[RMDB]
Background
The record gives the reactivity of an RNA of 177 nucleotides to 2A3 and DMS. For DMS, 5,033 sequencing reads were counted. The 2A3 profile rests on 7,492 reads. The reactions ran in a buffer of 150 mM KOAc, 10 mM MgCl2 and 150 mM bicine (pH 8.5), at 24 C.

RNA sequence: GGGAACGACUCGAGUAGAGUCGAAAAGGUCGGAGCUUCGGCUCCGACCAAAGCAGGAUUACCAAAUCCCAGGAAGCAGCAGCAGCAAGCAAGCAGCAAGCAAAACCAUUACGUUCGCGUAAUGGAACUAGUUAAGUUACUUCGGUAACUUAACUAGAAAAGAAACAACAACAACAAC
Reactivity to 2A3 in 0.01 (KOAc 150mM, MgCl2 10mM, bicine 150mM(pH8.5), 24C), signal-to-noise 3, nucleotides 027 to 126: g000g000u000c010g010g010a000g010c030u100u150c300g100g000c020u000c000c020g010a010c000c000a000a000a010g000c010a000g010g050a040u040u080a070c030c000a040a050a050u030c030c000c010a020g050g040a060a010g030c030a000g000c010a000g000c010a000g010c010a050a050g000c020a040a010g000c010a010g020c020a050a030g030c000a000a010a030a190c000c000a000u000u010a000c010g020u030u050c270g000c000g090u000a000a000u000g000g000a000a020
Reactivity to DMS in 0.01 (KOAc 150mM, MgCl2 10mM, bicine 150mM(pH8.5), 24C), signal-to-noise 5, nucleotides 027 to 126: g000g010u000c010g010g000a020g040c000u000u000c230g020g010c000u000c000c010g020a000c000c000a000a010a060g020c090a080g000g010a080u000u010a100c070c060a060a090a100u000c020c010c040a120g000g020a120a100g010c050a030g000c040a040g010c030a050g000c050a060a060g000c060a050a060g000c070a060g000c080a060a080g010c120a060a070a100a140c010c000a000u000u000a010c010g010u010u000c180g010c010g000u000a000a000u000g000g000a040a100